Conditions: 150 mM KOAc, 10 mM MgCl2 and 150 mM bicine (pH 8.5), 24 C. An RNA of 177 nucleotides, treated with 2A3 and DMS and read out base by base. It was measured as part of the RMDB library M2PK50. Reactivities are given for positions 27 through 126.
RNA sequence: GGGAACGACUCGAGUAGAGUCGAAAAUCUUUGCGCUUCGGCGCAAAGAAAACGCCUGCUGCUCCGUGACCCGUCCGUGAGACCGACGGUCCAGCCCGCCGAAAACUAUGGUGUUCGCACCAUAGAAGAAAUUCGUAAUGUUCGCAUUACGAAUUUCAAAAGAAACAACAACAACAAC
Reactivity to 2A3 in 0.01 (KOAc 150mM, MgCl2 10mM, bicine 150mM(pH8.5), 24C), signal-to-noise 1, nucleotides 027 to 126: u000c010u060u010u030g010c020g010c030u060u090c280g110g000c000g030c000a000a000a000g000a010a050a000a010c030g030c000c010u080g060c000u010g000c000u020c040c010g080u030g060a070c000c000c030g010u010c000c010g090u060g010a130g010a080c040c020g030a050c010g020g000u000c010c010a010g000c010c010c010g020c010c010g100a090a070a010a030c000u000a000u020g000g000u010g040u050u020c220g000c040a010c000c000a000u010a000g000a020a020
Reactivity to DMS in 0.01 (KOAc 150mM, MgCl2 10mM, bicine 150mM(pH8.5), 24C), signal-to-noise 2, nucleotides 027 to 126: u000c000u000u000u000g030c000g030c000u000u010c240g040g030c000g020c010a000a010a010g000a020a020a110a110c150g000c040c000u000g010c020u000g010c040u010c030c040g010u000g000a070c070c030c040g020u010c030c060g020u000g010a150g000a080c090c090g020a060c060g010g010u010c020c050a070g020c000c030c020g010c090c080g000a060a070a060a150c010u000a010u000g000g010u000g000u000u000c160g020c000a020c000c000a010u000a000g000a050a100